Background: This 177-nucleotide RNA was probed chemically with 2A3 and DMS. The DMS profile rests on 3,479 reads. For 2A3 the reverse transcriptase was SuperScript II with manganese. The 2A3 profile rests on 7,383 reads. The RNA was probed in 150 mM KOAc, 10 mM MgCl2 and 150 mM bicine (pH 8.5) at 24 C. Source: RMDB library TTRINS, as collected in RNAgym.
[RMDB]
RNA sequence: GGGAACGACUCGAGUAGAGUCGAAAAGAUAUGGAGCAUCUCUAGCGUGGGCGAAGAACCGCAUACAACCAAGUGGUCGGAAACGACCAUCAAAGUGUAUGCGGGGAGCCUCGGGUGCUCCUAAGUCGUACAGACUAUUGUUCGCAAUAGUCUGUACAAAAGAAACAACAACAACAAC
Reactivity to 2A3 in 0.01 (KOAc 150mM, MgCl2 10mM, bicine 150mM(pH8.5), 24C), signal-to-noise 3, nucleotides 027 to 126: g030a010u090a040u150g000g000a000g020c010a030u030c080u030c190u300a140g160c040g160u300g030g010g000c010g120a300a000g000a030a010c000c000g000c000a000u030a000c110a190a110c060c010a120a030g020u000g000g000u010c000g000g000a030a040a030c000g000a000c050c000a010u060c020a040a070a010g110u070g000u090a000u000g000c010g000g000g000g000a000g000c000c000u010c000g000g000g010u000g000c010u020c000c000u000a010a000g020u020c040
Reactivity to DMS in 0.01 (KOAc 150mM, MgCl2 10mM, bicine 150mM(pH8.5), 24C), signal-to-noise 3, nucleotides 027 to 126: g010a060u010a190u000g010g020a000g000c030a010u000c000u010c300u020a190g040c170g040u010g000g030g030c000g000a070a190g000a150a230c000c000g010c000a010u000a010c000a070a040c020c110a170a270g010u000g010g010u000c000g010g000a040a070a120c000g010a000c000c010a000u000c040a020a130a230g000u000g010u010a010u000g010c010g010g000g000g020a030g000c010c010u000c030g000g010g020u000g000c000u000c000c010u000a010a040g010u000c090